[RMDB]
RNA sequence: GGGAACGACUCGAGUAGAGUCGAAAACAUGCGCUGUGACCGCAAGAUGGAGGUGGCGUUCAUGGUGUGUGCCAUCAACCCUUCCAUUGACCUGCACACCGACUCGCUGGAGCUUCUGCAGCUGCAGCCUUGAAGGUCGAUUCGUCGACCUUCAAGGAAAAGAAACAACAACAACAAC
Reactivity to DMS in 0.01 (KOAc 150mM, MgCl2 10mM, bicine 150mM(pH8.5), 24C), signal-to-noise 3, nucleotides 027 to 126: c090a070u000g010c040g000c050u000g010u000g010a070c060c010g000c050a080a140g010a100u010g010g000a060g020g020u010g020g000c060g020u000u010c120a070u000g000g020u000g030u000g010u020g000c010c110a090u000c100a080a080c030c010c030u010u000c040c020a090u000u010g010a140c190c050u000g000c040a050c030a060c060c010g000a080c070u000c090g020c020u000g010g010a050g000c010u000u000c100u000g010c090a070g010c040u000g000c020a050g010
Reactivity to 2A3 in 0.01 (KOAc 150mM, MgCl2 10mM, bicine 150mM(pH8.5), 24C), signal-to-noise 3, nucleotides 027 to 126: c030a050u090g000c020g000c050u070g080u070g110a140c030c020g000c060a040a030g070a090u110g040g040a080g020g100u160g060g000c090g020u040u030c030a040u000g030g030u070g050u060g050u180g050c020c020a030u020c020a020a090c010c010c000u050u030c020c010a040u030u060g080a080c000c050u030g000c030a030c000a020c030c000g070a060c020u020c050g000c020u020g090g020a040g000c030u070u040c060u150g030c070a020g030c030u090g020c030a010g030